[RMDB]
RNA sequence: GGGAACGACUCGAGUAGAGUCGAAAAAAGAACUGGAUGGGCCGUGUGCUUAACCAGGACAAGAUCUCCUUCUCUCCAACGUUGUUGCCAACUCAUGAUUCUCCUAACCUGUGCUUGGAGAGACGUGCUACCAUAUAGGUGUUCGCACCUAUAUGAACCUAAAUCAUGCUUUCGAGCAUGAUUUAGGAAAAGAAACAACAACAACAAC
Reactivity to DMS in 0.01 (KOAc 150mM, MgCl2 10mM, bicine 150mM(pH8.5), 24C), signal-to-noise 1, nucleotides 027 to 156: a070a120g000a050a120c040u010g040g010a110u010g010g030g050c030c020g040u000g020u000g110c000u000u010a110a110c050c000a000g000g010a170c090a070a070g020a090u000c050u010c000c040u000u000c030u000c000u010c010c020a050a100c180g020u010u010g020u010u010g000c000c070a060a100c100u010c000a050u000g000a160u000u000c010u010c020c030u000a060a020c030c060u010g030u010g020c080u000u030g010g020a080g000a010g010a050c090g010u000g010c010u000a180c140c010a000u000a000u000a000g010g020u000g010u000u000c300g030c000a040c000c000u000a020u000a000u000g000a050a160
Reactivity to 2A3 in 0.01 (KOAc 150mM, MgCl2 10mM, bicine 150mM(pH8.5), 24C), signal-to-noise 2, nucleotides 027 to 156: a020a020g060a030a000c020u000g000g060a050u010g070g000g010c100c120g270u170g170u300g130c020u020u050a050a010c020c000a030g000g010a000c080a060a040g020a150u040c090u010c060c000u040u010c000u010c000u010c050c010a080a070c110g000u020u020g030u020u000g020c050c050a050a050c030u000c050a050u060g080a200u160u000c090u030c090c020u050a090a040c010c050u120g020u070g100c060u050u070g010g000a030g000a000g000a000c000g070u060g030c000u170a160c040c030a000u000a000u000a010g000g020u000g030u050u020c120g020c070a000c000c000u000a000u000a000u000g000a000a010
Overview
Source: RMDB library M2RFPK, as collected in RNAgym. Chemical mapping of a 207-nucleotide RNA with DMS and 2A3. The reactions ran in a buffer of 150 mM KOAc, 10 mM MgCl2 and 150 mM bicine (pH 8.5), at 24 C. For DMS the reverse transcriptase was MarathonRT.